[RMDB]
About this RNA
Chemical mapping of a 207-nucleotide RNA with DMS and 2A3. The reactions ran in a buffer of 150 mM KOAc, 10 mM MgCl2 and 150 mM bicine (pH 8.5), at 24 C.

RNA sequence: GGGAACGACUCGAGUAGAGUCGAAAAAGUCGGACGGGAAGUGGUGUUUCCAGUGGCGGACGGGUGAGUAACGCGUAAGAACCUGCCCUUGGGAGGGGAACAACAGCUGGAAACGGCUGCUAAUACCCCAUAGGCUGAGGAGCAAAAGGAGGAAUCCCAGCUCCUAUGUAUUCGUACAUAGGAGCUGAAAAGAAACAACAACAACAAC
Reactivity to DMS in 0.01 (KOAc 150mM, MgCl2 10mM, bicine 150mM(pH8.5), 24C), signal-to-noise 1, nucleotides 027 to 156: a170g040u000c000g010g010a150c080g060g000g000a090a090g020u030g040g010u000g070u000u000u010c000c060a140g040u000g030g070c000g040g020a080c050g010g040g050u000g070a130g040u010a110a110c080g040c030g030u000a120a140g010a210a050c040c030u000g000c040c010c040u000u000g010g010g000a120g040g030g020g040a030a230c090a000a020c000a060g000c000u040g010g010a170a040a280c000g100g000c000u010g020c010u000a040a120u000a070c010c000c010c000a110u000a040g000g000c000u010g010a030g000g000a140g010c050a070a010a130a060g000g020a030g070g000a090a120u000c000c050
Reactivity to 2A3 in 0.01 (KOAc 150mM, MgCl2 10mM, bicine 150mM(pH8.5), 24C), signal-to-noise 1, nucleotides 027 to 156: a020g040u010c030g040g040a080c030g030g030g000a070a040g020u020g030g080u040g010u010u070u010c030c040a040g020u060g100g020c040g020g000a010c030g050g000g060u070g030a090g040u070a060a040c080g030c050g090u010a010a100g040a070a040c040c050u030g010c020c000c000u020u030g040g020g050a170g000g030g000g000a000a000c030a020a000c000a010g010c010u010g060g040a000a090a000c020g000g000c030u000g010c000u010a060a010u070a140c020c000c000c050a050u070a040g040g020c010u040g020a000g010g030a050g010c040a070a080a040a000g010g010a030g000g020a040a050u060c010c010